[RMDB]
Conditions: 150 mM KOAc, 10 mM MgCl2 and 150 mM bicine (pH 8.5), 24 C. An RNA of 177 nucleotides, treated with DMS and 2A3 and read out base by base.
RNA sequence: GGGAACGACUCGAGUAGAGUCGAAAAUCGAGGCCUCGAAACGGAGCAGAGUUGCCGGGCAUGCUAGUUGGCAUCAUAGCCGUCGCGCCGCUGCGGGUGGGAGGCCAGGUGGCGGUGCAGGGCACCAAAUCGUAGUCGGGUUCGCCCGACUACGAUUAAAAGAAACAACAACAACAAC
Reactivity to DMS in 0.01 (KOAc 150mM, MgCl2 10mM, bicine 150mM(pH8.5), 24C), signal-to-noise 1, nucleotides 027 to 126: u010c030g010a100g000g060c000c020u010c030g050a080a050a130c010g000g030a090g000c010a060g000a080g010u000u020g020c050c070g000g000g050c090a060u000g010c000u000a180g030u000u070g040g000c020a000u010c090a150u000a110g020c040c010g000u030c070g060c000g010c050c020g030c010u000g020c000g040g130g110u020g010g070g000a290g020g000c000c000a090g000g040u000g000g020c030g000g000u000g020c000a160g020g000g050c010a130c000c020a060
Reactivity to 2A3 in 0.01 (KOAc 150mM, MgCl2 10mM, bicine 150mM(pH8.5), 24C), signal-to-noise 2, nucleotides 027 to 126: u120c070g030a030g020g000c020c000u000c090g070a080a050a050c070g040g040a000g000c020a000g040a020g100u120u260g010c010c020g030g020g000c030a010u070g000c000u050a120g110u130u130g020g010c020a000u000c040a110u190a050g010c050c000g090u160c100g000c010g000c000c040g090c010u050g050c030g000g040g060u150g010g080g040a080g080g000c000c030a040g000g010u030g080g000c030g000g000u000g090c070a120g000g020g090c000a020c000c030a030